[RMDB]
RNA sequence: GGGAACGACUCGAGUAGAGUCGAAAACAAGGGCUAUUGAUGCGCCACCGGCUAUUACAUAUUUUGGCUUCUUUGAGAUUUUAUAUGUCUUUUUUAUUGAUUUGUAAUGGCUCAUGAAGUAAUCAUAGGGUACUCAUAUAUUCGUAUAUGAGUACCCAAAAGAAACAACAACAACAAC
Reactivity to 2A3 in 0.01 (KOAc 150mM, MgCl2 10mM, bicine 150mM(pH8.5), 24C), signal-to-noise 4, nucleotides 027 to 126: c030a030a070g030g030g010c040u090a110u170u090g040a010u090g020c020g030c020c000a040c020c040g000g020c020u040a030u080u050a070c040a040u130a110u100u130u090u160g140g000c010u040u060c010u100u250u130g050a040g000a020u010u040u170u140a180u120a060u160g030u040c000u000u090u080u020u060u070a170u180u200g020a020u010u000u060g010u010a020a010u000g000g000c010u000c060a010u210g030a020a000g080u120a030a080u090c020a040u030a020
Reactivity to DMS in 0.01 (KOAc 150mM, MgCl2 10mM, bicine 150mM(pH8.5), 24C), signal-to-noise 2, nucleotides 027 to 126: c100a130a170g010g010g000c030u030a100u040u000g010a030u010g010c060g040c010c010a080c180c140g020g000c000u000a050u010u010a020c040a050u040a040u020u000u020u020g000g000c060u040u000c090u040u010u010g000a030g000a050u040u010u020u040a090u030a050u040g000u000c000u000u030u020u000u030u030a050u050u020g000a020u000u000u000g000u040a000a020u000g020g000c040u040c100a120u040g010a020a070g030u020a100a010u010c010a020u000a160